[RMDB]
RNA sequence: GGGAACGACUCGAGUAGAGUCGAAAAAGAUUGAUUACGAUCGAUCAAUGAUGCCCCUCACCCACCUCUGAAGAUCCCAGGUGGGCGAGGGAACGGAGCACGGGAUCACGAGCAGUACGCUGCUCGAAAAAGAACUAGACCUUCGGGUCUAGUUCAACACACCAGUUCUCUUCGGAGAACUGGUGUGAAAAGAAACAACAACAACAAC
Reactivity to 2A3 in 0.01 (KOAc 150mM, MgCl2 10mM, bicine 150mM(pH8.5), 24C), signal-to-noise 1, nucleotides 027 to 156: a000g030a010u010u000g000a010u030u070a080c170g010a030u010c010g010a000u000c030a050a110u160g130a050u180g070c030c000c000c000u000c000a000c000c020c000a010c000c000u000c090u150g070a180a030g020a030u020c020c000c000a000g000g000u000g000g020g010c000g000a000g000g020g000a030a030c040g070g060a090g060c150a070c100g000g030g000a000u000c020a020c050g000a010g000c030a000g000u070a000c180g000c160u000g000c000u010c000g000a000a000a000a020a000g000a010a000c000u000a000g000a000c050c000u020u110c240g000g090g000u000c000u000a000g000u000u000c010a000a000